[RMDB]
RNA sequence: GGGAACGACUCGAGUAGAGUCGAAAAGAUAUGGACGAUCGGGCAGGUUUUCUCUUGGACCCAACGUAACAUCCUAUCGGAAACGAUAGGUGGUUGGCUAGAGGGACCUGCCCGAUCGUCCUAAGUCGUUAAAUAGAACGUUCGCGUUCUAUUUAACAAAAGAAACAACAACAACAAC
Reactivity to DMS in 0.01 (KOAc 150mM, MgCl2 10mM, bicine 150mM(pH8.5), 24C), signal-to-noise 2, nucleotides 027 to 126: g010a130u000a300u000g010g010a020c010g010a000u000c010g010g000g000c010a030g020g020u000u000u000u010c000u000c000u000u000g030g010a130c300c000c010a020a010c000g010u010a000a040c250a020u020c000c000u000a000u000c000g010g000a180a130a220c010g020a020u000a000g000g030u000g000g000u000u000g000g010c020u000a010g000a030g000g000g000a000c010c000u000g000c000c010c010g000a000u000c000g010u000c000c000u000a010a100g000u010c150